RNA sequence: GGGAACGACUCGAGUAGAGUCGAAAAACGUCCUCGUCGUACAGAACGGUAACAUGUUUUCCGAACAUCCGCGCUUGGGUAUACGAGUAUACACCUUACCCAACCCUCGCCAACGGGGAGGAUGGGAUUAAGGAGAGGGCCUUCGGGCCCUCUCCAAGGUCAUGAUAGAGUUCGCUCUAUCAUGACCAAAAGAAACAACAACAACAAC
Reactivity to 2A3 in 0.01 (KOAc 150mM, MgCl2 10mM, bicine 150mM(pH8.5), 24C), signal-to-noise 1, nucleotides 027 to 156: a000c010g000u030c010c000u040c010g280u020c050g000u060a040c000a170g060a120a000c040g030g050u080a100a040c040a060u180g040u070u050u020u120c010c030g000a050a030c000a100u020c090c000g050c040g000c070u000u010g000g020g040u020a070u010a140c120g010a080g060u050a050u050a110c180a060c060c010u020u070a000c010c000c030a000a050c000c000c000u020c000g100c060c030a140a140c030g000g010g010g000a000g020g000a020u010g010g060g020a040u250u140a140a120g000g000a010g010a010g000g000g040c000c060u130u070c140g000g020g000c000c000c000u000c000u000c000c000a000a000